Structure probing data (2A3) for a 207-nucleotide construct. The reactions ran in a buffer of 150 mM KOAc, 10 mM MgCl2 and 150 mM bicine (pH 8.5), at 24 C. Source: RMDB library ARCHII, as collected in RNAgym.
[RMDB]
RNA sequence: GGGAACGACUCGAGUAGAGUCGAAAAUCAGUUAAGCCUGUCCGGCGUCACGACGGACAGGUCGAAAAUCAAGUGAAUCGCCGUAACGGAGCGUGUUCGUCCGCGACGUCACGGUUAAAUCAAAUGACAGAACUAAACAUGUAGAACUGGUCGUGGAGCGUAAUUUAGGGUUCGCCCUAAAUUACGCAAAAGAAACAACAACAACAAC
Reactivity to 2A3 in 0.01 (KOAc 150mM, MgCl2 10mM, bicine 150mM(pH8.5), 24C), signal-to-noise 1, nucleotides 027 to 156: u130c010a040g090u040u100a000a040g000c000c020u000g030u000c000c000g000g000c040g060u000c000a000c000g020a020c000g030g000a010c010a000g000g080u000c000g010a000a000a000a020u160c130a200a010g000u000g000a000a000u010c000g030c000c000g000u030a000a000c010g010g000a010g000c020g000u000g000u040u000c010g030u000c000c010g020c000g010a000c000g000u000c000a000c000g000g010u020u000a000a000a030u120c030a020a010a050u120g000a000c090a200g000a040a000c000u030a010a120a050c050a060u160g060u140a000g030a110a050c030u010g090g040u140c050g090u040g030g030a050